[RMDB]
RNA sequence: GGGAACGACUCGAGUAGAGUCGAAAAGAACACUGCUGGGGCUGGGAUCUUGCCUGGUUGCUCCGCCUGCACCCAAGACAACCAUAAUUAAAAUGUCCUUCAUUGAACUUGGAAAGCCUUCAAAGCUGACAACUCCUUAUGUGUACCCGGAAAGGCCAAACAGGUAAGAAUUCGUUCUUACCUGUUUAAAAGAAACAACAACAACAAC
Reactivity to 2A3 in 0.01 (KOAc 150mM, MgCl2 10mM, bicine 150mM(pH8.5), 24C), signal-to-noise 4, nucleotides 027 to 156: g040a030a020c040a010c060u090g010c040u060g020g000g060g000c030u020g000g040g030a040u040c030u050u090g020c000c020u020g030g010u050u060g000c020u040c030c020g020c010c010u030g010c020a040c020c010c010a020a020g030a050c030a030a060c050c030a070u100a170a110u190u160a080a110a030a110u090g040u060c020c000u030u090c050a100u040u100g060a080a080c030u020u000g020g010a140a050a020g020c010c010u090u060c070a100a070a070g030c040u050g020a010c010a040a080c010u090c030c000u090u080a080u080g050u020g020u080a070c010c000c000g010g010a140a080a010g030g010c030c050
Reactivity to DMS in 0.01 (KOAc 150mM, MgCl2 10mM, bicine 150mM(pH8.5), 24C), signal-to-noise 3, nucleotides 027 to 156: g010a090a090c040a060c060u010g000c040u000g000g010g030g030c050u010g030g030g010a090u010c050u000u000g000c040c020u000g020g020u000u000g000c020u000c030c070g000c060c010u010g010c040a120c030c020c010a070a110g010a100c030a050a110c020c030a090u000a070a120u010u010a070a090a110a130u000g010u000c040c010u000u000c070a110u000u000g000a050a080c060u000u020g020g000a080a090a100g000c020c000u000u030c080a090a050a080g020c030u000g020a120c030a030a100c050u000c020c020u010u000a060u010g020u000g030u000a100c010c030c030g000g020a050a060a070g000g020c030c080
Conditions: 150 mM KOAc, 10 mM MgCl2 and 150 mM bicine (pH 8.5), 24 C. Structure probing data (2A3 and DMS) for a 207-nucleotide construct. 2A3 adducts were read by reverse transcription with SuperScript II with manganese. It was measured as part of the RMDB library OK3TST. For 2A3, 2,698 sequencing reads were counted.